[RMDB]
Source: RMDB library ARCHII, as collected in RNAgym. Structure probing data (2A3) for a 207-nucleotide construct.
RNA sequence: GGGAACGACUCGAGUAGAGUCGAAAAGGGCGAAGGCCUGGGCCUCUCUAGACCUGAAGCGGCAGGCAUGGCGUGAGGCUGGCUUCACAGAGCAGCGAUCACUGCCCGCUUCCAACGGUGGGAGGAUAACAGGCCGCUGCAUUGCAAGCCCAACUCGCAACACAUCUUCCUUCGGGAAGAUGUGUUGAAAAGAAACAACAACAACAAC
Reactivity to 2A3 in 0.01 (KOAc 150mM, MgCl2 10mM, bicine 150mM(pH8.5), 24C), signal-to-noise 1, nucleotides 027 to 156: g000g030g000c080g170a210a080g000g020c020c000u010g000g000g000c000c000u010c000u030c020u020a120g100a080c000c000u000g000a000a000g020c000g010g030c010a000g080g000c070a040u140g130g010c050g000u080g040a000g050g070c040u010g060g000c130u150u210c000a130c060a210g050a010g000c020a020g000c030g040a040u050c010a020c050u040g000c000c000c040g050c000u000u000c000c040a050a080c060g010g000u020g010g000g000a000g020g020a000u100a170a070c000a000g000g000c000c000g020c000u010g000c020a100u140u280g060c020a020a020g010c000c000c000a000a000c020u010c060g000